Conditions: 150 mM KOAc, 10 mM MgCl2 and 150 mM bicine (pH 8.5), 24 C. Chemical mapping of a 177-nucleotide RNA with 2A3 and DMS. DMS adducts were read by reverse transcription with MarathonRT. Values cover nucleotides 27 to 126.
RNA sequence: GGGAACGACUCGAGUAGAGUCGAAAAAAACGAUGUUUGGACAAAUUCUUCUUUGCAUUCGCUAGCUCUCGCACCUCUUUCGCAGACAAACCUUAAUUGGCGAACAGCAAUAGAGCUUCCGUCAUAGAUUUACCCGAUCGUUCGCGAUCGGGUAAAUAAAAGAAACAACAACAACAAC
Reactivity to 2A3 in 0.01 (KOAc 150mM, MgCl2 10mM, bicine 150mM(pH8.5), 24C), signal-to-noise 2, nucleotides 027 to 126: a000a000a000c070g050a040u100g030u010u020u080g110g010a020c130a030a220a100u150u020c080u110u030c000u000u000u030g000c010a020u080u010c030g060c020u000a050g020c000u000c000u020c040g050c040a080c030c020u070c000u010u020u130c020g080c030a020g020a070c050a050a080a050c020c000u110u180a120a100u200u050g090g000c000g020a050a000c020a050g000c000a010a060u050a240g020a040g050c020u080u010c010c040g060u030c010a060u060a140g140
Reactivity to DMS in 0.01 (KOAc 150mM, MgCl2 10mM, bicine 150mM(pH8.5), 24C), signal-to-noise 2, nucleotides 027 to 126: a030a040a030c040g010a080u060g020u000u050u000g000g010a050c030a190a110a140u030u000c050u070u020c000u010u000u000g080c020a090u000u020c030g060c020u150a080g030c080u000c010u000c070g020c200a270c020c000u000c150u000u020u010c030g020c110a030g000a220c090a010a080a080c080c010u040u000a050a140u000u000g000g000c140g000a080a020c230a110g010c020a000a040u010a060g000a100g000c070u000u000c200c030g000u000c000a260u020a030g000